[RMDB]
The data come from the RNA Mapping Database (RMDB), library OK2TRN. Chemical mapping of a 177-nucleotide RNA with DMS and 2A3. DMS (dimethyl sulfate) methylates the pairing face of unpaired adenines and cytosines. For DMS, 34,210 sequencing reads were counted. The RNA was probed in 150 mM KOAc, 10 mM MgCl2 and 150 mM bicine (pH 8.5) at 24 C.

RNA sequence: GGGAACGACUCGAGUAGAGUCGAAAACACGUAGUCAGCUGAGCUGCGCUGGCGCUGUGGCCGGCCAUGCGCACGCAGGUACGGCCCACUCGUGCGCACUGAUCAGGUACGUACGAUCUAUAGUACGAUCCAGAGAUAGAUUCGUCUAUCUCUGGAUAAAAGAAACAACAACAACAAC
Reactivity to DMS in 0.01 (KOAc 150mM, MgCl2 10mM, bicine 150mM(pH8.5), 24C), signal-to-noise 9, nucleotides 027 to 126: c080a120c110g010u010a080g020u000c050a070g010c030u010g010a110g020c110u010g010c110g020c020u000g010g010c040g010c170u010g020u010g020g010c010c010g010g010c020c010a060u010g020c000g010c210a080c230g010c030a030g010g010u000a080c020g010g000c030c010c040a030c090u000c020g010u000g010c010g010c020a050c070u000g000a100u010c190a100g000g000u000a070c020g010u000a010c010g000a050u000c110u000a110u010a090g010u000a070c120g000
Reactivity to 2A3 in 0.01 (KOAc 150mM, MgCl2 10mM, bicine 150mM(pH8.5), 24C), signal-to-noise 9, nucleotides 027 to 126: c060a000c030g080u060a040g070u070c030a020g020c050u090g070a030g080c070u080g010c070g000c050u030g060g000c000g000c090u090g050u120g060g000c010c000g010g000c010c010a250u050g000c080g020c050a090c170g000c020a010g020g010u170a260c010g010g000c010c010c000a020c010u030c010g030u050g010c000g040c010a020c030u060g040a260u150c060a060g050g040u060a020c010g010u010a010c010g020a030u010c070u120a180u060a130g080u070a040c050g020